[RMDB]
RNA sequence: GGGAACGACUCGAGUAGAGUCGAAAAGAUUUACGGCGGGAAAGGUCCCGGGCGCGCCGAGGUACCGGGUGCGGCACCGACCGAAAGGCGCGGAAAUGCGGCACCGACCGAAACCGCCGGAAAGAAAGGUAUCGGAUAUAUUCGUAUAUCCGAUACCAAAAGAAACAACAACAACAAC
Reactivity to 2A3 in 0.01 (KOAc 150mM, MgCl2 10mM, bicine 150mM(pH8.5), 24C), signal-to-noise 1, nucleotides 027 to 126: g020a040u030u080u110a040c020g000g000c010g000g000g070a110a080a040g030g000u030c030c020c060g000g060g000c070g000c040g000c000c030g020a090g030g010u070a070c090c060g050g070g020u060g060c070g030g000c020a020c020c000g040a030c020c010g050a110a030a040g060g000c110g000c020g040g000a060a080a010u170g020c010g010g000c030a010c070c050g020a030c010c000g000a080a030a010c000c000g000c010c010g000g000a000a000a010g020a020a070a010
Reactivity to DMS in 0.01 (KOAc 150mM, MgCl2 10mM, bicine 150mM(pH8.5), 24C), signal-to-noise 3, nucleotides 027 to 126: g000a140u000u000u000a080c010g010g010c000g010g000g000a060a070a290g010g000u010c050c130c060g000g000g030c030g020c070g000c000c020g020a220g020g000u010a070c140c020g000g010g010u000g010c020g020g030c010a100c020c020g000a140c020c030g010a050a160a190g000g020c040g010c010g000g000a060a050a070u000g010c020g000g000c300a050c060c070g000a040c020c030g000a080a120a110c010c010g000c000c000g010g000a030a010a080g000a060a070a060